[RMDB]
RNA sequence: GGGAACGACUCGAGUAGAGUCGAAAACUCGAAAGAGACCUGCAUAUCUUAGGCAGAUCAACAAGUCAUGUCUGAAAAGCGAAAGCCCUAAGAUAUGCAGCUGUGAAGACUUGACGCAGAACACACACCCAUUACGCGCAUUCGUGCGCGUAAUGGGAAAAGAAACAACAACAACAAC
Reactivity to 2A3 in 0.01 (KOAc 150mM, MgCl2 10mM, bicine 150mM(pH8.5), 24C), signal-to-noise 1, nucleotides 027 to 126: c000u000c020g000a000a150a000g040a010g000a030c000c000u000g000c000a000u000a000u050c000u000u000a000g000g000c030a000g000a060u070c000a030a300c040a090a000g020u010c010a100u130g060u030c010u030g090a160a130a220a000g030c010g000a060a090a000g000c000c000c000u010a000a000g000a000u000a000u000g000c000a000g000c000u080g040u000g000a030a000g070a020c000u050u030g010a000c010g010c020a000g120a230a000c100a000c010a000c000a030

An RNA of 177 nucleotides, treated with 2A3 and read out base by base. Source: RMDB library OK1LIB, as collected in RNAgym. For 2A3 the reverse transcriptase was SuperScript II with manganese. Values cover nucleotides 27 to 126. Conditions: 150 mM KOAc, 10 mM MgCl2 and 150 mM bicine (pH 8.5), 24 C.